[RMDB]
RNA sequence: GGGAACGACUCGAGUAGAGUCGAAAAGCAAAGCACAUGAAGCACAUGAAGCACAUGAAGCACAUGAAGCACAUGAAGCACAUGAAGCACAUGAAGCACAAGAAGCACAUGAAGCACAUGAAAAAAACAGAAAUAUGUACUUCGGUACAUAUUUCUGAAAAGAAACAACAACAACAAC
Reactivity to 2A3 in 0.01 (KOAc 150mM, MgCl2 10mM, bicine 150mM(pH8.5), 24C), signal-to-noise 2, nucleotides 027 to 126: g040c040a060a030a000g010c000a010c000a110u040g050a120a010g000c010a040c010a060u020g110a150a020g010c010a010c000a070u060g090a080a030g020c010a030c000a090u010g090a090a020g000c010a010c010a050u030g060a080a030g010c030a000c000a080u040g070a070a020g000c000a000c000a030u060g080a100a000g020c010a010c010a070a080g120a090a010g010c010a010c000a040u040g060a030a000g000c020a020c030a100u140g040a050a040a020a010a010a000a040
Reactivity to DMS in 0.01 (KOAc 150mM, MgCl2 10mM, bicine 150mM(pH8.5), 24C), signal-to-noise 2, nucleotides 027 to 126: g010c020a050a070a110g000c070a150c010a060u010g010a050a170g070c000a190c010a020u020g030a100a090g040c030a190c050a020u000g000a100a070g070c060a170c060a020u000g050a080a140g000c020a150c030a050u000g010a050a100g010c010a210c020a030u010g000a070a130g020c000a130c030a050u000g010a090a080g000c010a030c100a070a060g010a080a100g000c030a070c020a030u000g010a050a010g000c030a060c070a010u010g030a010a000a020a010a000a040a050
Chemical mapping of a 177-nucleotide RNA with 2A3 and DMS. DMS adducts were read by reverse transcription with MarathonRT. Reactivities are given for positions 27 through 126. The DMS profile rests on 1,129 reads.